Description:
Structure probing data (2A3 and DMS) for a 177-nucleotide construct. It was measured as part of the RMDB library TTRDEL. The DMS profile rests on 1,179 reads. For DMS the reverse transcriptase was MarathonRT. The reactions ran in a buffer of 150 mM KOAc, 10 mM MgCl2 and 150 mM bicine (pH 8.5), at 24 C.
RNA sequence: GGGAACGACUCGAGUAGAGUCGAAAAGAUAUGGAAAGCGCGAAACGUGACUAGGACUAUAAUCUCGGAAACGAGGUAGUCCUUACACGGAGCUUUCCUAAGUCAAAGUAGGUGUUCGCACCUACAACACUAACGGGCAGUUCGCUGCCCGUUAGUGAAAAGAAACAACAACAACAAC
Reactivity to 2A3 in 0.01 (KOAc 150mM, MgCl2 10mM, bicine 150mM(pH8.5), 24C), signal-to-noise 2, nucleotides 027 to 126: g010a060u000a010u020g040g000a050a010a000g000c020g020c130g090a220a110a030c020g040u020g220a300c150u070a010g000g000a000c020u000a020u060a300a300u180c010u010c000g000g000a080a060a030c010g000a010g000g000u000a000g000u000c000c000u000u000a020c040a000c020g000g040a020g000c000u020u020u000c010c000u010a100a030g020u020c020a050a050a070g010u000a000g020g000u020g040u150u080c300g000c090a010c000c000u020a010c000a010a010
Reactivity to DMS in 0.01 (KOAc 150mM, MgCl2 10mM, bicine 150mM(pH8.5), 24C), signal-to-noise 2, nucleotides 027 to 126: g000a020u000a300u000g010g000a000a000a010g010c000g000c150g010a070a030a120c010g010u000g000a190c240u000a000g010g020a000c000u000a000u000a290a080u000c000u010c000g010g030a050a040a190c000g000a000g010g020u000a000g000u000c000c000u000u010a040c000a020c000g000g000a150g020c000u000u000u030c000c000u000a000a040g000u000c030a070a070a150g010u000a000g010g000u000g000u010u000c260g060c000a000c000c000u000a000c000a070a160